[RMDB]
RNA sequence: GGGAACGACUCGAGUAGAGUCGAAAAGUAUGUAUGGAUAACCAUACGUACAAAUAAUUGCCUCAUGGUGGUGGCUGGGGGAACCCUCAUGGUGGUGGGUGUGGAAAAUAAAGAUCCGAAAGGAUCAGGAUAGCAUCAUCUUCGGAUGAUGCUAUCCAAAAGAAACAACAACAACAAC
Reactivity to 2A3 in 0.01 (KOAc 150mM, MgCl2 10mM, bicine 150mM(pH8.5), 24C), signal-to-noise 2, nucleotides 027 to 126: g000u000a010u020g000u000a000u000g000g030a160u090a170a190c000c000a000u000a000c000g000u000a000c000a030a090a000u210a000a100u140u050g030c000c010u060c020a020u010g090g000u100g000g050u070g050g000c090u050g060g000g000g000g030a000a010c000c000c000u020c020a030u050g030g030u020g000g100u020g020g010g000u040g020u070g000g030a040a070a000a000u160a030a170a030g000a000u000c000c000g020a000a020a010g000g000a000u000c000a000
Reactivity to DMS in 0.01 (KOAc 150mM, MgCl2 10mM, bicine 150mM(pH8.5), 24C), signal-to-noise 1, nucleotides 027 to 126: g020u000a000u000g000u000a000u010g020g000a210u110a130a290c030c000a010u020a000c000g000u000a000c000a070a030a110u010a100a130u040u020g010c000c010u000c180a100u030g000g000u030g000g000u050g010g000c110u000g020g000g000g000g000a000a010c010c010c020u030c180a050u000g030g000u010g000g030u070g000g000g040u050g000u000g000g000a050a020a180a060u020a040a100a100g000a010u000c000c000g000a050a020a200g000g000a000u000c010a020
The record gives the reactivity of an RNA of 177 nucleotides to 2A3 and DMS. Conditions: 150 mM KOAc, 10 mM MgCl2 and 150 mM bicine (pH 8.5), 24 C. The data come from the RNA Mapping Database (RMDB), library OK1LIB. The DMS profile rests on 1,619 reads. The 2A3 profile rests on 1,416 reads.